[RMDB]
Structure probing data (DMS) for a 177-nucleotide construct. The reactions ran in a buffer of 150 mM KOAc, 10 mM MgCl2 and 150 mM bicine (pH 8.5), at 24 C. For DMS the reverse transcriptase was MarathonRT.
RNA sequence: GGGAACGACUCGAGUAGAGUCGAAAAACAUAGUGUACAUUCAACGAGAAUUGCUCGAGAUUGCACGCUACUUGAAUAAUAGAACUGAGAACAUCAAGCAAGGUUCAUUGGCUUCCUUUAGAAACAACUUAAAACCUGUCUUCGGACAGGUUUUAAGAAAAGAAACAACAACAACAAC
Reactivity to DMS in 0.01 (KOAc 150mM, MgCl2 10mM, bicine 150mM(pH8.5), 24C), signal-to-noise 1, nucleotides 027 to 126: a060c090a010u010a020g000u010g020u000a050c010a000u010u000c030a120a050c010g000a020g030a300a160u000u000g010c000u000c010g020a280g030a050u000u000g000c010a010c030g010c000u010a000c170u000u040g000a140a030u010a120a020u000a080g030a010a030c020u000g000a270g020a030a090c150a160u020c210a030a070g000c020a010a140g000g000u000u010c000a070u000u000g020g010c080u000u020c030c020u000u020u030a050g000a050a110a070c150a010a150